[RMDB]
Structure probing data (2A3) for a 207-nucleotide construct. The RNA was probed in 150 mM KOAc, 10 mM MgCl2 and 150 mM bicine (pH 8.5) at 24 C.
RNA sequence: GGGAACGACUCGAGUAGAGUCGAAAACUGAACAUGUCCUGUUGGAAAGAGAACAUGUUGAAGUAAUGAUGAACUGCAAACCGCCUCAGGCUGGAAACAGAGCAGGGUCAGUGGUCGCUGGUGUACGGUGCGAAGAUUACGGUUGAGCGGGCAAGGUCUGCAGUACUUUGUUCGCAAAGUACUGCAGAAAAGAAACAACAACAACAAC
Reactivity to 2A3 in 0.01 (KOAc 150mM, MgCl2 10mM, bicine 150mM(pH8.5), 24C), signal-to-noise 4, nucleotides 027 to 156: c030u050g020a020a010c020a020u010g010u020c010c010u040g050u060u060g050g050a040a050a010g030a020g000a030a010c000a020u050g000u020u030g080a100a020g050u110a120a050u120g100a050u040g040a090a030c020u030g010c050a040a010a090c030c030g040c010c040u100c040a060g000g040c020u050g030g060a040a020a050c050a040g030a010g020c020a020g060g000g000u030c040a030g010u010g030g010u030c030g020c050u020g020g020u030g030u030a060c070g020g020u030g030c030g010a030a030g030a110u100u140a020c030g010g000u030u050g030a020g020c010g000g010g000c020a030a020g060g010u010